[RMDB]
RNA sequence: GGGAACGACUCGAGUAGAGUCGAAAACGCCUAGUCUAUAGUGUGAUUUAAUUUGAAGGAACAAGGCCUAUGAACCCAACUAUCCACUAUACUUAAAGAAAUCACAUUUGCCAAGCAUGCACACCACCAACUAACGAGAGUUCGCUCUCGUUAGUUGAAAAGAAACAACAACAACAAC
Reactivity to 2A3 in 0.01 (KOAc 150mM, MgCl2 10mM, bicine 150mM(pH8.5), 24C), signal-to-noise 3, nucleotides 027 to 126: c040g000c000c000u020a040g030u040c050u090a140u070a160g020u030g010u040g020a060u010u090u180a170a250u070u100u170g090a090a050g020g000a060a060c040a040a070g050g000c000c010u150a150u160g030a070a040c020c010c000a000a030c020u040a050u000c010c000a020c050u020a070u060a120c030u090u130a100a090a080g070a040a130a000u030c030a050c000a060u030u070u040g000c020c010a070a020g010c030a070u080g020c020a010c030a010c020c020a020c010
Reactivity to DMS in 0.01 (KOAc 150mM, MgCl2 10mM, bicine 150mM(pH8.5), 24C), signal-to-noise 3, nucleotides 027 to 126: c210g010c010c020u000a060g010u010c070u000a030u000a030g010u000g010u010g010a030u000u000u000a070a080u010u010u010g010a110a110g010g000a080a090c100a090a060g020g020c030c040u040a090u000g020a140a130c020c010c040a040a080c150u010a080u010c030c050a050c050u000a070u000a090c070u020u000a030a070a060g010a040a040a050u000c030a000c030a030u000u000u000g000c020c040a050a060g000c030a030u010g010c030a050c060a070c040c040a090c160

Description: This 177-nucleotide RNA was probed chemically with 2A3 and DMS. Source: RMDB library OK2TRN, as collected in RNAgym. 2A3 adducts were read by reverse transcription with SuperScript II with manganese.